[RMDB]
RNA sequence: GGGAACGACUCGAGUAGAGUCGAAAAGAUGAACUGAGAGCUGCUUCCAGCCCUGCGCGCACCAUCUGGAAUUCCAGUCUGAGGUUACAAUUAGAACUCCUGACCCCAGAUUCAACUUUGCAAACAACUCAAUAGGCGUGUUCGCACGCCUAUUGAGAAAAGAAACAACAACAACAAC
Reactivity to 2A3 in 0.01 (KOAc 150mM, MgCl2 10mM, bicine 150mM(pH8.5), 24C), signal-to-noise 3, nucleotides 027 to 126: g080a030u070g010a080a030c050u020g020a010g000a000g120c000u040g000c010u080u010c010c000a000g000c010c000c000u030g010c010g000c020g000c060a020c060c000a060u170c010u040g020g070a060a090u130u010c000c000a000g060u000c020u080g030a060g030g000u090u080a020c060a040a040u150u120a080g040a100a040c010u020c040c030u030g120a100c000c000c010c010a020g010a050u060u100c010a030a070c060u150u060u060g060c030a030a030a060c010a010a020
Reactivity to DMS in 0.01 (KOAc 150mM, MgCl2 10mM, bicine 150mM(pH8.5), 24C), signal-to-noise 2, nucleotides 027 to 126: g000a120u000g020a110a050c040u000g000a070g000a050g010c020u020g000c140u000u010c040c020a050g000c030c000c000u010g030c090g040c050g060c060a030c110c040a040u000c060u000g000g030a070a210u020u010c110c000a070g030u010c030u000g010a130g010g030u050u000a180c110a050a090u050u000a150g000a080a190c130u040c050c060u000g000a070c050c000c000c000a080g000a160u010u020c130a040a060c080u010u010u050g020c070a020a020a050c150a080a100
Structure probing data (2A3 and DMS) for a 177-nucleotide construct. The RNA was probed in 150 mM KOAc, 10 mM MgCl2 and 150 mM bicine (pH 8.5) at 24 C. For DMS, 1,829 sequencing reads were counted. It was measured as part of the RMDB library RFM100. For 2A3, 1,786 sequencing reads were counted.